[RMDB]
RNA sequence: GGGAACGACUCGAGUAGAGUCGAAAAAUUAGCCGGCUAUAGCAUGCUAGCAUCGGCAUCGAUGCCGCGUACGUAUACGUACGUAGCAUGCAUUACGUACGAUCGGCUAGCUAUAGCAUCGCGAUCGUCCGUCCGUCACAUUCGUGUGACGGACGGAAAAAGAAACAACAACAACAAC
Reactivity to DMS in 0.01 (KOAc 150mM, MgCl2 10mM, bicine 150mM(pH8.5), 24C), signal-to-noise 1, nucleotides 027 to 126: a030u010u000a130g010c030c050g000g000c010u000a010u000a060g010c000a160u000g020c050u020a080g050c140a060u010c000g010g020c160a100u020c130g000a050u000g010c010c250g000c000g000u000a000c130g040u000a160u000a080c070g040u000a010c060g030u010a060g000c030a020u010g070c080a060u000u000a060c120g010u010a060c020g060a070u020c000g000g010c000u000a170g000c010u000a040u000a020g000c010a070u000c140g000c040g000a100u000c210g000
Reactivity to 2A3 in 0.01 (KOAc 150mM, MgCl2 10mM, bicine 150mM(pH8.5), 24C), signal-to-noise 1, nucleotides 027 to 126: a000u220u090a050g020c030c020g010g000c000u000a000u000a030g000c010a010u060g020c000u020a070g080c070a020u010c000g030g080c050a050u080c100g040a020u040g000c010c000g070c000g000u000a010c000g070u130a090u080a300c070g000u000a010c010g020u000a050g040c030a050u010g050c000a020u090u100a010c040g010u000a070c010g000a020u010c010g000g090c000u040a050g020c000u000a000u030a080g020c020a080u170c080g000c040g030a040u120c050g040

Structure probing data (DMS and 2A3) for a 177-nucleotide construct. For DMS, 765 sequencing reads were counted. For 2A3 the reverse transcriptase was SuperScript II with manganese. Source: RMDB library OK2TRN, as collected in RNAgym. The 2A3 profile rests on 1,322 reads. Conditions: 150 mM KOAc, 10 mM MgCl2 and 150 mM bicine (pH 8.5), 24 C.